[RMDB]
RNA sequence: GGGAACGACUCGAGUAGAGUCGAAAAGGAGUUAAGUUCGCUUAACUCCCACUACCGAGAAUGCGACUGGGUAUAUCGCAAUAACCCUUGGAAACAAGGGAACCACUGACGACUUCGGUCGUCAGAACUAAACAGCAUAGUUCGCUAUGCUGUUUAGAAAAGAAACAACAACAACAAC
Reactivity to 2A3 in 0.01 (KOAc 150mM, MgCl2 10mM, bicine 150mM(pH8.5), 24C), signal-to-noise 8, nucleotides 027 to 126: g000g000a000g000u000u000a010a000g000u030u090c160g010c130u000u000a000a000c000u010c000c000c000a060c020u090a050c000c020g040a060g050a160a100u070g010c010g020a020c060u180g060g000g170u180a150u040a010u150c010g000c020a030a030u160a090a110c000c000c000u010u000g010g010a040a040a020c010a010a010g010g000g020a010a020c030c030a050c040u010g000a000c000g000a000c000u020u060c250g100g000u000c000g000u000c000a000g000a000a000
Reactivity to DMS in 0.01 (KOAc 150mM, MgCl2 10mM, bicine 150mM(pH8.5), 24C), signal-to-noise 8, nucleotides 027 to 126: g000g000a030g010u000u010a010a010g010u000u010c250g030c000u000u000a010a010c010u000c000c000c030a080c100u010a200c000c000g000a120g000a150a100u000g020c010g010a030c080u010g010g010g020u000a080u000a100u000c010g000c010a050a120u010a080a120c000c000c000u000u000g000g000a170a110a190c000a010a000g000g000g000a060a040c130c150a180c010u000g000a010c000g000a020c000u000u010c180g030g020u000c000g000u000c000a000g000a060a140

Annotation
Chemical mapping of a 177-nucleotide RNA with 2A3 and DMS. Reactivities are given for positions 27 through 126. For DMS the reverse transcriptase was MarathonRT. For 2A3 the reverse transcriptase was SuperScript II with manganese.